Chemical mapping of a 177-nucleotide RNA with 2A3 and DMS.
The DMS profile rests on 120,183 reads.
Source: RMDB library OK2TRN, as collected in RNAgym.
2A3 adducts were read by reverse transcription with SuperScript II with manganese.

RNA sequence: GGGAACGACUCGAGUAGAGUCGAAAAGGAUCCUACCUUCACAGGACGGUAACUGCCUCCAGUACAGUUACCCCUGUGAAGGAUGGUUGUCAUUGUACUGGAGGAUGGCUAGAUGAAAUUAGGAUCGCUAGAAGUGAGUAUUCGUACUUACUUCUAGAAAAGAAACAACAACAACAAC
Reactivity to 2A3 in 0.01 (KOAc 150mM, MgCl2 10mM, bicine 150mM(pH8.5), 24C), signal-to-noise 9, nucleotides 027 to 126: g020g000a010u000c010c000u010a060c000c000u000u000c000a000c000a020g040g070a100c130g030g010u010a020a000c000u010g030c010c020u080c090c040a090g050u170a050c000a000g000u010u010a010c000c000c000c000u000g000u010g000a000a000g000g000a000u010g010g000u140u080g020u010c020a030u010u090g150u180a140c110u140g130g090a070g080g040a040u020g020g000c030u050a040g020a270u170g110a080a070a070u110u050a030g010g000a000u010c000g000
Reactivity to DMS in 0.01 (KOAc 150mM, MgCl2 10mM, bicine 150mM(pH8.5), 24C), signal-to-noise 9, nucleotides 027 to 126: g010g000a010u000c000c000u000a090c010c010u000u000c000a010c010a020g000g010a140c190g020g000u000a010a010c010u000g010c090c040u010c210c220a100g010u010a220c010a010g000u000u000a010c000c010c000c000u000g010u000g000a010a000g000g000a010u000g010g010u000u000g010u000c010a060u000u000g010u010a110c110u010g000g010a090g010g010a030u000g000g000c020u000a080g010a140u010g010a060a060a120u010u000a020g010g000a010u000c010g010